[RMDB]
Record summary:
Source: RMDB library OK2TRN, as collected in RNAgym. An RNA of 177 nucleotides, treated with 2A3 and DMS and read out base by base. The DMS profile rests on 1,038 reads. DMS (dimethyl sulfate) methylates the pairing face of unpaired adenines and cytosines. The reactions ran in a buffer of 150 mM KOAc, 10 mM MgCl2 and 150 mM bicine (pH 8.5), at 24 C.
RNA sequence: GGGAACGACUCGAGUAGAGUCGAAAAGACACGACGGAGACGUCGUGUCAAGUCCAGUGCGAAAGCACUGGACAAAUAAGGGCUGUUUAUCUCGCUGACUUUCAGCCCCAAACAAAAAGUGUCAGCACCUAUUUUACUGCUUCGGCAGUAAAAUAGGAAAAGAAACAACAACAACAAC
Reactivity to 2A3 in 0.01 (KOAc 150mM, MgCl2 10mM, bicine 150mM(pH8.5), 24C), signal-to-noise 2, nucleotides 027 to 126: g000a000c000a010c020g000a000c020g040g000a050g020a050c000g000u000c000g010u000g010u010c000a000a000g000u000c000c000a000g000u010g010c040g070a130a030a020g010c010a000c020u010g010g000a010c000a000a030a000u150a050a050g010g000g000c010u000g030u020u030u020a100u060c170u070c130g000c010u010g000a010c000u010u020u010c010a000g000c010c010c020c000a020a040a000c000a010a000a000a020a020g180u030g010u020c000a000g000c010a030
Reactivity to DMS in 0.01 (KOAc 150mM, MgCl2 10mM, bicine 150mM(pH8.5), 24C), signal-to-noise 1, nucleotides 027 to 126: g000a010c010a000c000g010a010c000g010g010a200g010a250c010g020u000c010g000u000g010u000c020a000a100g000u000c000c000a000g000u000g010c020g000a120a070a070g030c000a000c000u000g000g010a010c020a020a040a100u030a110a170g000g010g000c000u010g010u000u000u010a070u040c110u010c130g030c010u020g010a000c000u000u000u000c010a020g020c000c000c000c240a010a010a180c020a020a010a010a000a010g000u010g000u000c000a020g040c020a290

As a SHAPE reagent, 2A3 marks flexible, mostly unpaired nucleotides at the ribose 2'-OH. For 2A3 the reverse transcriptase was SuperScript II with manganese.